Conditions: 150 mM KOAc, 10 mM MgCl2 and 150 mM bicine (pH 8.5), 24 C.
Chemical mapping of a 207-nucleotide RNA with DMS and 2A3.
The DMS profile rests on 4,487 reads.
DMS adducts were read by reverse transcription with MarathonRT.
It was measured as part of the RMDB library OK3TST.
2A3 adducts were read by reverse transcription with SuperScript II with manganese.
RNA sequence: GGGAACGACUCGAGUAGAGUCGAAAACGAUGAGAUCAUGCUAAACGAAACUGGAUUUACACUUUGAUCAAAAGGUAAAGCAAGGUUCGAUCGAUUCAGACUAUUGUUAAAUAUUUCAUCAUCCAACUUUAGCAUGACAUCAUGCGAUGAGAUCAUGGAGGAUAAGUAGGUUCGCCUACUUAUCCUCAAAAGAAACAACAACAACAAC
Reactivity to DMS in 0.01 (KOAc 150mM, MgCl2 10mM, bicine 150mM(pH8.5), 24C), signal-to-noise 3, nucleotides 027 to 156: c030g000a070u020g020a070g040a110u000c030a040u000g020c030u000a020a030a110c020g020a110a040a060c030u000g000g010a110u000u000u000a020c040a090c030u020u000u000g000a180u010c270a080a050a040a030g010g010u010a000a020a050g020c010a130a040g010g000u000u000c010g020a120u000c040g010a200u000u000c080a100g000a140c140u000a080u000u000g030u010u000a040a080a090u000a060u000u000u000c040a140u000c040a090u000c000c070a040a130c080u000u000u000a050g010c010a040u000g000a060c100a070u000c000a300u010g040c060g010a080u010g010a130g000a040u000c060a110u000g010
Reactivity to 2A3 in 0.01 (KOAc 150mM, MgCl2 10mM, bicine 150mM(pH8.5), 24C), signal-to-noise 4, nucleotides 027 to 156: c020g030a000u030g020a020g020a090u000c010a020u010g000c020u020a020a030a020c120g090a100a020a060c030u000g020g030a030u020u020u060a030c300a050c030u020u040u070g150a200u260c080a050a050a000a000g030g010u040a060a010a020g000c020a020a010g030g040u070u060c020g040a020u070c060g030a010u120u110c030a020g000a010c060u080a090u210u080g080u160u090a070a090a080u130a100u080u200u120c080a120u040c030a020u000c030c050a030a050c060u020u020u010a000g030c000a000u020g010a030c010a090u050c000a000u120g120c040g070a100u140g020a020g000a070u110c040a090u010g080